Structure probing data (DMS and 2A3) for a 177-nucleotide construct. Source: RMDB library TTRINS, as collected in RNAgym. For DMS, 2,990 sequencing reads were counted.
[RMDB]
RNA sequence: GGGAACGACUCGAGUAGAGUCGAAAAGAUAUGGAUAACUCGACGAUCUCCGUGGCCACUUGGACCUUAAUGCUCUCGGAAACGAGAGCAUUAAGCUAGUGGCACGGAGGGAGAGUUAUCCUAAGUCCUCUAAUCCCAAGUUCGCUUGGGAUUAGAGAAAAGAAACAACAACAACAAC
Reactivity to DMS in 0.01 (KOAc 150mM, MgCl2 10mM, bicine 150mM(pH8.5), 24C), signal-to-noise 2, nucleotides 027 to 126: g000a110u010a300u000g020g020a030u000a000a010c010u000c000g010a110c300g020a040u010c000u000c000c000g020u000g040g000c040c000a010c000u000u020g040g000a120c300c010u000u000a010a000u000g000c000u000c000u000c000g020g000a080a110a230c020g000a000g000a010g010c020a000u000u000a000a000g010c050u010a010g020u000g000g000c000a010c000g000g000a010g000g010g000a020g000a030g000u010u000a010u000c000c000u000a030a100g000u000c040
Reactivity to 2A3 in 0.01 (KOAc 150mM, MgCl2 10mM, bicine 150mM(pH8.5), 24C), signal-to-noise 1, nucleotides 027 to 126: g000a030u110a050u290g010g000a010u010a000a020c000u020c020g300a300c020g010a300u010c010u000c000c010g020u060g220g210c000c010a000c040u070u090g090g100a260c000c040u000u000a010a000u010g000c020u010c000u000c000g040g010a090a080a010c000g050a000g010a000g000c000a000u000u000a000a000g000c000u010a000g000u000g000g000c000a000c000g010g000a000g000g000g010a020g000a000g020u020u000a000u020c010c000u000a020a020g020u010c000